[RMDB]
Structure probing data (2A3 and DMS) for a 177-nucleotide construct. The data come from the RNA Mapping Database (RMDB), library OK2TRN. The reactions ran in a buffer of 150 mM KOAc, 10 mM MgCl2 and 150 mM bicine (pH 8.5), at 24 C.
RNA sequence: GGGAACGACUCGAGUAGAGUCGAAAAGGGCCAAACCAGCCGCUAUCCGUUGAAGAAGUCGAUUUAAUGCCACCACAAAAAGGCGAAGUCUUGGUGCGGAUCGUCGCCAGUGGGGUUUGCCACACUGCACUGUCAGGAGUUUCGACUCCUGACAGUGAAAAGAAACAACAACAACAAC
Reactivity to 2A3 in 0.01 (KOAc 150mM, MgCl2 10mM, bicine 150mM(pH8.5), 24C), signal-to-noise 2, nucleotides 027 to 126: g090g010g010c070c010a030a030a060c000c010a040g080c060c020g040c010u000a040u030c010c000g020u050u210g080a080a040g080a070a010g070u080c020g060a030u050u070u200a120a080u170g010c030c010a100c010c020a050c140a050a170a010a050a020g040g000c000g040a060a010g070u000c020u080u080g110g040u110g050c040g010g050a040u050c030g090u050c020g000c000c000a010g000u100g060g090g020g030u020u110u100g000c020c000a030c000a010c040u080g000
Reactivity to DMS in 0.01 (KOAc 150mM, MgCl2 10mM, bicine 150mM(pH8.5), 24C), signal-to-noise 4, nucleotides 027 to 126: g020g000g010c030c070a030a080a110c050c040a200g010c030c020g010c080u000a070u000c010c030g020u000u020g000a060a090g020a060a080g010u000c040g000a090u020u000u010a100a080u000g010c030c050a090c070c040a050c100a050a070a070a090a090g000g010c010g010a050a100g010u000c020u000u000g020g020u000g010c040g000g000a040u010c080g010u000c140g010c040c030a070g020u000g000g000g010g010u000u000u020g010c010c020a080c120a060c120u000g000